[RMDB]
RNA sequence: GGGAACGACUCGAGUAGAGUCGAAAAGAUAUGGACGCUUGUGGACAGCAACAGCUCGGAAACGAGACAUGCUGCCAUGGCGUCCUAAGUCAAAAGUUUGGUUAACUCUUCGGAGUUAACCAAACAAGUAUCGGCUAAAGUUCGCUUUAGCCGAUACAAAAGAAACAACAACAACAAC
Reactivity to 2A3 in 0.01 (KOAc 150mM, MgCl2 10mM, bicine 150mM(pH8.5), 24C), signal-to-noise 2, nucleotides 027 to 126: g020a010u080a060u120g000g020a010c050g030c100u300u300g040u000g070g080a290c010a010g030c010a020a100c040a180g040c000u010c020g000g040a030a070a050c000g000a000g000a020c020a080u070g000c000u010g010c020c000a010u010g010g000c000g010u010c000c000u000a000a000g010u000c010a080a000a080a080g000u000u000u010g000g000u000u000a010a010c010u000c000u100u100c300g040g010a030g000u000u000a000a000c000c000a010a000a010c000a010a000
Reactivity to DMS in 0.01 (KOAc 150mM, MgCl2 10mM, bicine 150mM(pH8.5), 24C), signal-to-noise 3, nucleotides 027 to 126: g010a030u000a300u000g000g010a020c010g000c000u010u020g100u000g010g010a150c000a010g000c000a020a080c240a190g000c010u000c010g010g010a080a110a240c010g000a010g000a070c070a200u000g000c000u000g000c010c010a030u000g010g000c020g000u010c010c000u000a010a060g020u010c040a060a070a110a110g010u000u000u000g000g000u000u000a000a010c000u000c010u000u000c160g000g010a020g020u000u000a000a000c000c000a000a000a000c020a070a150